[RMDB]
RNA sequence: GGGAACGACUCGAGUAGAGUCGAAAACAGAGCCGACUAAGCACCUUGGUGCGGCUGCAGACGGGUAUCCGGCUCGACGUUCAUACAUCACGACUUCUUUCCUUUUACCUUGUUUGUUGCUGCUCCUCUGUUCAUCGUACUUCGGUACGAUGAACAGAAAAGAAACAACAACAACAAC
Reactivity to 2A3 in 0.01 (KOAc 150mM, MgCl2 10mM, bicine 150mM(pH8.5), 24C), signal-to-noise 3, nucleotides 027 to 126: c070a010g060a010g060c000c050g020a070c050u110a130a000g040c020a070c090c020u090u200g040g000u000g030c000g010g000c000u010g000c000a010g000a010c000g010g000g000u000a020u050c060c020g020g000c020u040c020g010a020c030g010u080u060c040a100u100a160c030a060u100c060a050c080g070a050c000u020u020c010u050u020u050c000c000u080u080u040u030a040c000c000u130u230g010u050u040u020g000u020u030g010c010u020g000c000u000c000c010u010
Structure probing data (2A3) for a 177-nucleotide construct. 2A3 adducts were read by reverse transcription with SuperScript II with manganese. It was measured as part of the RMDB library RFM100.